[RMDB]
RNA sequence: GGGAACGACUCGAGUAGAGUCGAAAAAAUGGCACUGCAGAGCUGAUGGGCCAUGUACCUAUCCAAAAUGAGUUCCCAUCUUGCACACUGUGCUAAUUUGAGAUUCUCAUGCCUCCUACUUGGAGAGACCGCAUGCCCAGCUUCGGCUGGGCAUGAAGAUAUCGGACACAUUCGUGUGUCCGAUAUCAAAAGAAACAACAACAACAAC
Reactivity to DMS in 0.01 (KOAc 150mM, MgCl2 10mM, bicine 150mM(pH8.5), 24C), signal-to-noise 1, nucleotides 027 to 156: a010a040u000g000g040c010a060c020u010g020c040a200g020a070g020c030u010g040a030u010g000g000g030c100c040a100u010g060u010a040c050c030u020a060u000c060c160a120a080a180a070u000g040a110g000u000u000c010c000c000a030u000c050u000u020g010c010a090c030a100c090u000g040u000g030c000u000a070a060u000u000u000g010a070g000a120u000u010c010u000c000a050u000g020c060c000u000c010c000u000a030c170u020u010g000g000a050g010a100g010a140c090c060g000c000a020u010g010c000c000c010a030g000c020u000u000c300g060g040c010u020g010g010g000c000a000u010g030a010a140
Reactivity to 2A3 in 0.01 (KOAc 150mM, MgCl2 10mM, bicine 150mM(pH8.5), 24C), signal-to-noise 3, nucleotides 027 to 156: a000a000u060g010g000c020a020c040u070g000c150a040g010a020g150c020u010g000a000u010g000g000g010c020c000a020u020g030u030a110c060c060u090a140u260c110c090a110a080a040a040u030g010a040g080u130u120c000c000c000a000u000c020u040u150g020c050a070c010a020c090u050g000u000g010c010u070a110a230u010u010u030g080a070g010a050u090u020c040u000c010a030u050g040c000c000u000c000c000u100a200c090u100u100g000g040a050g000a020g020a090c080c130g000c020a000u020g000c010c000c000a000g000c000u010u050c130g090g000c000u000g000g030g000c000a000u000g000a000a000
Chemical mapping of a 207-nucleotide RNA with DMS and 2A3. For DMS the reverse transcriptase was MarathonRT. Values cover nucleotides 27 to 156. The RNA was probed in 150 mM KOAc, 10 mM MgCl2 and 150 mM bicine (pH 8.5) at 24 C. 2A3 adducts were read by reverse transcription with SuperScript II with manganese. In probing experiments dimethyl sulfate is read out at A N1 and C N3, which are open when not base-paired. For DMS, 2,336 sequencing reads were counted.